[RMDB]
RNA sequence: GGGAACGACUCGAGUAGAGUCGAAAAUGACAACCUACCCGAGGCAGCUGAGACAGCUAUGCUAAUAGGUAUGCUAGUAUCUGUCACCAUGGGCACCAUCAUGUUUUUCAUGAUGCCUAAAGGCAUCCACAUAGUAAGGCUUCGGCCUUACUAUGUGAAAAGAAACAACAACAACAAC
Reactivity to DMS in 0.01 (KOAc 150mM, MgCl2 10mM, bicine 150mM(pH8.5), 24C), signal-to-noise 9, nucleotides 027 to 126: u010g010a070c080a080a120c130c020u000a050c020c020c010g000a140g000g010c030a070g010c030u000g010a150g010a080c050a020g000c060u010a030u000g010c020u010a060a080u000a070g010g010u010a050u010g010c090u000a050g010u000a030u000c020u000g010u000c020a140c070c170a080u000g010g010g000c060a080c110c030a050u000c080a060u000g010u010u000u000u000u010c050a060u000g010a010u000g010c010c010u000a050a080a120g010g010c020a040u000c030
Reactivity to 2A3 in 0.01 (KOAc 150mM, MgCl2 10mM, bicine 150mM(pH8.5), 24C), signal-to-noise 9, nucleotides 027 to 126: u090g020a020c020a030a080c020c010u040a040c000c010c020g000a030g030g020c060a040g010c040u050g020a020g030a140c020a010g000c020u080a040u100g010c010u030a090a080u070a200g200g070u150a080u180g060c030u030a030g010u020a070u140c020u020g040u020c010a020c050c020a070u070g010g020g000c030a020c040c000a030u080c020a030u060g080u040u130u040u070u040c030a040u050g000a000u010g010c000c000u190a240a090a030g020g000c000a000u020c010